[RMDB]
RNA sequence: GGGAACGACUCGAGUAGAGUCGAAAAAAUGCUUGUUAACUUUCUGCUUUAUGGUUUAUGAUGCUUGUAAAAUGAUAGGAUUAUUGUCCAUGUAUGUAAUUGGUGAAGGAUAUGAAACUCAGAACAAACCAUAUAGUGCCAUGUAAGUUAUGGACAAUGAUGCAUUACUAUUCGUAGUAAUGCAUCAAAAAGAAACAACAACAACAAC
Reactivity to 2A3 in 0.01 (KOAc 150mM, MgCl2 10mM, bicine 150mM(pH8.5), 24C), signal-to-noise 7, nucleotides 027 to 156: a000a000u130g020c090u030u040g000u040u010a060a040c020u040u050u030c020u040g060c010u030u040u050a040u060g020g030u050u030u030a070u130g060a040u040g020c060u070u050g050u100a040a090a110a100u100g070a090u110a100g070g020a050u080u050a050u080u150g010u000c010c020a010u060g060u090a070u050g050u040a090a170u110u060g030g010u060g060a100a050g040g030a040u020a020u140g070a050a030a020c050u050c040a020g040a090a030c040a070a050a020c020c010a000u040a010u030a040g070u070g040c000c010a010u030g010u030a010a080g010u030u070a010u020g020g010a010c010a010a020
Reactivity to DMS in 0.01 (KOAc 150mM, MgCl2 10mM, bicine 150mM(pH8.5), 24C), signal-to-noise 4, nucleotides 027 to 156: a110a070u000g010c050u000u000g020u010u000a090a110c050u000u010u000c010u010g010c030u000u000u000a050u000g030g010u000u000u010a060u010g010a080u000g010c050u010u000g020u000a040a060a110a100u000g000a150u010a080g020g010a140u000u000a100u010u000g020u000c010c040a100u000g010u000a050u010g010u010a150a110u010u000g040g020u010g020a090a120g040g010a070u000a060u000g000a100a070a090c070u000c050a140g020a090a100c080a050a060a080c040c020a070u000a060u000a040g020u000g030c030c010a030u000g000u000a030a100g030u000u000a040u000g010g010a050c060a070a160

Structure probing data (2A3 and DMS) for a 207-nucleotide construct. DMS (dimethyl sulfate) methylates the pairing face of unpaired adenines and cytosines. Values cover nucleotides 27 to 156. The 2A3 profile rests on 5,077 reads.